Notes:
The record gives the reactivity of an RNA of 177 nucleotides to 2A3 and DMS. Reactivities are given for positions 27 through 126. The RNA was probed in 150 mM KOAc, 10 mM MgCl2 and 150 mM bicine (pH 8.5) at 24 C.

RNA sequence: GGGAACGACUCGAGUAGAGUCGAAAAGUGCAUAAGGCGGCAAUUCAUGCACGGCACGCCGCAUUGGCAUUGCAGUGCAGCCACGAUUUGAUGGAGAGAGAGUUGCGUCGCGUGCUGUCCAUCACGCCGAGGGACUACGGUUCGCCGUAGUCCCUCGAAAAGAAACAACAACAACAAC
Reactivity to 2A3 in 0.01 (KOAc 150mM, MgCl2 10mM, bicine 150mM(pH8.5), 24C), signal-to-noise 1, nucleotides 027 to 126: g020u030g060c030a040u040a150a000g040g000c070g030g070c040a000a040u060u070c010a000u020g020c020a000c010g000g000c000a000c040g010c000c010g020c020a060u020u300g010g050c030a020u000u130g000c000a010g050u010g060c000a020g040c000c020a070c040g070a070u100u090u170g180a220u040g000g000a060g000a020g040a000g000a000g070u030u060g030c060g030u060c030g010c010g030u000g040c020u020g040u100c000c030a000u110c040a020c130g050c040
Reactivity to DMS in 0.01 (KOAc 150mM, MgCl2 10mM, bicine 150mM(pH8.5), 24C), signal-to-noise 3, nucleotides 027 to 126: g040u000g010c030a050u000a110a190g000g010c000g020g000c020a080a040u000u000c040a140u010g010c000a010c020g010g000c030a110c300g000c010c030g030c220a080u020u010g020g020c000a190u020u010g030c030a040g020u000g010c020a050g010c030c000a070c030g000a120u000u020u000g010a110u000g000g000a120g010a160g020a070g000a040g060u000u000g000c020g010u000c100g020c130g010u010g000c090u020g000u020c020c000a160u000c080a090c220g000c080